[RMDB]
RNA sequence: GGGAACGACUCGAGUAGAGUCGAAAAAAUGUCUCUUUGUCUGGAACAGAGGGAGGUAUAUCAAUUUCGGUAGGCCGAGAUAUCGUUUCAGUCGUCAUUCUUCCAUUGACGAUUCGAUUGUUGCUCGCACAAAAUAUGACUUCGGUCAUAUUUUGUGAAAAGAAACAACAACAACAAC
Reactivity to DMS in 0.01 (KOAc 150mM, MgCl2 10mM, bicine 150mM(pH8.5), 24C), signal-to-noise 3, nucleotides 027 to 126: a090a030u010g000u010c000u000c000u000u010u020g010u010c030u040g010g040a130a040c040a010g020a030g010g020g000a020g020g020u000a040u000a090u010c200a060a180u000u000u000c020g000g010u000a100g010g010c040c020g000a040g000a140u000a090u000c030g010u000u000u010c020a050g010u000c020g010u010c010a010u000u030c160u030u010c170c130a070u010u000g000a010c010g010a000u000u010c090g000a070u010u000g000u000u010g000c060u000c120g000
Reactivity to 2A3 in 0.01 (KOAc 150mM, MgCl2 10mM, bicine 150mM(pH8.5), 24C), signal-to-noise 4, nucleotides 027 to 126: a000a000u060g040u010c010u000c000u050u040u060g190u000c040u120g200g130a160a090c040a030g010a020g040g000g000a010g040g040u080a090u010a030u140c110a160a180u030u000u020c020g010g060u060a070g300g000c010c010g020a020g010a050u120a030u090c030g010u010u030u000c010a020g000u000c010g000u020c000a030u110u010c050u170u070c070c050a110u000u050g000a000c010g000a010u050u050c090g170a250u030u060g000u020u020g000c030u020c020g010

An RNA of 177 nucleotides, treated with DMS and 2A3 and read out base by base. For DMS the reverse transcriptase was MarathonRT. For 2A3 the reverse transcriptase was SuperScript II with manganese.